Background
This 177-nucleotide RNA was probed chemically with 2A3 and DMS. Source: RMDB library TTRINS, as collected in RNAgym.

RNA sequence: GGGAACGACUCGAGUAGAGUCGAAAAGAUAUGGAACCAGGAACUACGCUCAUACUUUCGAAGAACUUGAUUAUAAUCGGAAACGAUUAUAAUCAAGGGAGAAAGAUGAGCGCCUGGUUCCUAAGUCCAUAAUAUUAAGCUUCGGCUUAAUAUUAUGAAAAGAAACAACAACAACAAC
Reactivity to 2A3 in 0.01 (KOAc 150mM, MgCl2 10mM, bicine 150mM(pH8.5), 24C), signal-to-noise 3, nucleotides 027 to 126: g050a020u140a050u300g010g030a000a010c000c000a000g010g010a100a120c190u300a040c300g030c010u000c010a090u300a300c050u030u020u010c060g280a300a100g010a110a060c010u000u000g000a000u000u000a000u000a000a000u000c010g030g010a060a080a060c020g010a010u000u000a000u010a000a000u000c000a000a000g010g020g000a070g000a000a000a000g010a010u000g000a010g000c000g020c000c000u000g010g000u000u010c000c000u000a010a000g000u000c020
Reactivity to DMS in 0.01 (KOAc 150mM, MgCl2 10mM, bicine 150mM(pH8.5), 24C), signal-to-noise 3, nucleotides 027 to 126: g010a130u010a300u000g010g010a010a010c020c030a010g010g000a170a060c160u030a300c020g010c000u020c000a010u010a130c000u010u000u000c010g000a150a150g010a120a140c000u000u000g010a000u000u000a000u010a000a010u000c010g000g000a140a090a250c000g000a000u000u000a000u000a010a000u000c000a000a000g000g000g010a110g000a000a010a030g010a030u000g010a010g010c010g020c010c000u000g000g010u000u000c000c000u000a000a080g010u000c020